[RMDB]
RNA sequence: GGGAACGACUCGAGUAGAGUCGAAAAUUCCAUUUGAGUCUCCUGAAAACGGGCUUUUCAGCAUGGAACGUACAUAUUAAAUAGUAGGAGUGCAUAGUGGCCCGUAUAGCAGGCAUUAACAUUCCUGAAAACGUGAAAAGGUUCGCCUUUUCACGAACAGAAAUCCAAUCUUCGGAUUGGAUUUCUGAAAAGAAACAACAACAACAAC
Reactivity to 2A3 in 0.01 (KOAc 150mM, MgCl2 10mM, bicine 150mM(pH8.5), 24C), signal-to-noise 1, nucleotides 027 to 156: u010u000c000c000a030u130u030u080g030a020g040u030c010u050c000c000u000g040a030a030a030a030c030g000g000g000c000u100u050u110u090c020a030g030c020a010u090g060g050a060a060c060g040u090a080c050a020u290a090u160u210a130a180a060u160a020g040u010a000g050g100a030g020u000g020c040a020u080a180g100u040g050g000c040c000c000g000u000a000u020a050g020c020a000g000g020c000a000u030u070a060a030c000a010u130u000c000c000u060g060a150a120a000a000c000g000u000g000a000a000a000a000g080g050u040u040c140g060c000c000u030u050u000u000c000a000c000g020a000a000

The record gives the reactivity of an RNA of 207 nucleotides to 2A3.
Conditions: 150 mM KOAc, 10 mM MgCl2 and 150 mM bicine (pH 8.5), 24 C.
For 2A3, 591 sequencing reads were counted.
Reactivities are given for positions 27 through 156.